[RMDB]
RNA sequence: GGGAACGACUCGAGUAGAGUCGAAAACUUCCUCAGCCUUACUCCAGGGACUUUUGUUGCCUGUAAAGUGCUCUGGCAUUGCCUGAGGAUAGAUGAGAAAGCACAUAUCCCUCCCCAGUAAGACGCUCCAUUCGGGUUGAUUCGUCAACCCGAAUGGAAAAGAAACAACAACAACAAC
Reactivity to 2A3 in 0.01 (KOAc 150mM, MgCl2 10mM, bicine 150mM(pH8.5), 24C), signal-to-noise 4, nucleotides 027 to 126: c000u010u020c000c010u010c010a000g000c000c000u040u090a070c040u070c030c010a010g000g020g000a010c020u020u060u020u070g240u220u180g160c050c090u230g080u230a050a010a000g020u110g160c000u000c000u010g000g000c010a050u030u110g010c030c000u000g010a000g000g030a030u170a020g070a050u100g050a030g100a120a040a010g120c070a030c020a080u180a080u050c010c000c000u010c000c000c000c000a030g020u100a040a030g070a040c050g010c030u000